Chemical mapping of a 177-nucleotide RNA with 2A3 and DMS.
For 2A3 the reverse transcriptase was SuperScript II with manganese.
RNA sequence: GGGAACGACUCGAGUAGAGUCGAAAAAGACUUGGAGGAACCAUAAUAAAACUGUGGAUAACUUACUAAAGUCUUAGGAGGAACUUGGUCAUAGUUGAUAUUGAAUAGAGAGAACAAGUGUCUGGGACAAUUCCUAAGGAUUCGUCCUUAGGAAUUGAAAAGAAACAACAACAACAAC
Reactivity to 2A3 in 0.01 (KOAc 150mM, MgCl2 10mM, bicine 150mM(pH8.5), 24C), signal-to-noise 9, nucleotides 027 to 126: a000g010a010c010u010u030g020g010a010g010g040a030a050c000c010a020u030a060a060u120a040a170a030a050c120u040g000u020g030g010a070u080a170a060c010u010u150a080c030u140a140a040a020g000u000c000u010u020a080g020g020a030g020g020a020a040c020u020u050g020g010u060c020a040u060a110g060u040u070g090a090u090a080u130u090g050a060a040u140a070g090a010g020a000g000a060a010c020a070a040g020u030g090u070c040u040g020g000g040a010
Reactivity to DMS in 0.01 (KOAc 150mM, MgCl2 10mM, bicine 150mM(pH8.5), 24C), signal-to-noise 9, nucleotides 027 to 126: a020g000a020c010u000u000g010g010a030g000g000a100a160c010c010a010u000a030a100u010a080a090a110a280c230u000g020u000g000g010a060u020a080a180c000u000u000a140c050u020a040a020a030g010u000c010u000u000a080g010g010a130g010g010a090a050c040u000u000g010g000u010c020a070u010a080g000u000u000g000a100u010a090u020u020g010a070a090u020a100g010a080g000a100g010a030a040c040a050a060g010u000g010u000c020u000g000g010g010a240